[RMDB]
RNA sequence: GGGAACGACUCGAGUAGAGUCGAAAAGAUAUGGAGAGUCUGGUCCCGUGAUGACCUCGGAAACGAGCAAGCGGCCAGCUCUCCUAAGUCAAAGACUUCGAACUGAGUUCGCUCAGUUCGAAGUCAACCUCUGUUACUUCUUCGGAAGUAACAGAGGAAAAGAAACAACAACAACAAC
Reactivity to 2A3 in 0.01 (KOAc 150mM, MgCl2 10mM, bicine 150mM(pH8.5), 24C), signal-to-noise 2, nucleotides 027 to 126: g020a000u080a040u150g000g010a010g010a010g060u150c020u010g000g070u270c060c070c010g010u010g010a270u160g020a060c050c000u020c020g010g020a100a070a030c020g000a000g000c030a150a050g020c020g010g000c000c000a000g000c000u000c000u030c000c000u020a010a000g010u000c030a090a000a180g020a010c000u000u000c010g000a000a000c000u010g000a010g050u080u110c270g100c080u000c000a000g000u000u010c000g010a010a000g000u000c000a000a000
Reactivity to DMS in 0.01 (KOAc 150mM, MgCl2 10mM, bicine 150mM(pH8.5), 24C), signal-to-noise 2, nucleotides 027 to 126: g000a060u000a300u030g010g000a030g000a010g000u020c000u000g000g000u010c190c070c050g010u020g010a160u020g000a050c300c010u000c020g000g010a160a070a180c000g010a010g000c040a050a100g000c010g000g000c000c010a010g000c000u000c000u000c000c000u000a020a040g010u000c060a090a100a150g010a010c000u010u010c000g000a000a030c010u000g010a010g000u000u010c230g020c000u000c000a010g020u010u000c000g010a000a000g000u000c000a020a050
Annotation:
The record gives the reactivity of an RNA of 177 nucleotides to 2A3 and DMS. The DMS profile rests on 1,834 reads. The 2A3 profile rests on 4,602 reads. Reactivities are given for positions 27 through 126. It was measured as part of the RMDB library TTRDEL.